The record gives the reactivity of an RNA of 177 nucleotides to 2A3 and DMS. The DMS profile rests on 2,161 reads. 2A3 adducts were read by reverse transcription with SuperScript II with manganese. The 2A3 profile rests on 4,200 reads.

[RMDB]
RNA sequence: GGGAACGACUCGAGUAGAGUCGAAAAGAUAUGGACUGAAGUCCUCGAGAACUCAUAUGGGUGGGCGUGGUCGGAAACGACCACGGCGGAAACCCAUAUGAGGGAGUGAGGUCACAGUCCUAAGUCACGAUAGGUUCUAGUUCGCUAGAACCUAUCGAAAAGAAACAACAACAACAAC
Reactivity to 2A3 in 0.01 (KOAc 150mM, MgCl2 10mM, bicine 150mM(pH8.5), 24C), signal-to-noise 3, nucleotides 027 to 126: g020a030u070a050u150g000g000a020c010u030g050a300a030g130u100c060c000u000c020g300a300g070a190a020c020u000c020a000u030a010u020g000g000g000u170g140g170g030c030g020u030g000g020u030c000g000g000a040a080a020c010g000a000c020c020a000c030g000g030c010g000g230a270a240a060c000c000c000a000u020a000u000g000a000g000g000g020a140g300u300g010a000g000g020u040c040a040c010a140g010u010c000c000u000a020a020g030u020c050a020
Reactivity to DMS in 0.01 (KOAc 150mM, MgCl2 10mM, bicine 150mM(pH8.5), 24C), signal-to-noise 2, nucleotides 027 to 126: g010a090u000a300u010g000g010a020c000u020g000a160a170g000u000c000c010u000c010g040a280g020a300a230c000u000c010a020u010a000u000g000g000g000u010g010g000g010c010g020u000g010g000u000c020g000g000a080a060a200c000g020a010c000c010a000c020g020g000c040g020g000a110a140a040c010c000c000a010u000a000u010g000a010g000g010g040a200g000u020g010a000g020g000u010c050a300c010a010g010u000c000c000u000a020a050g010u000c060a270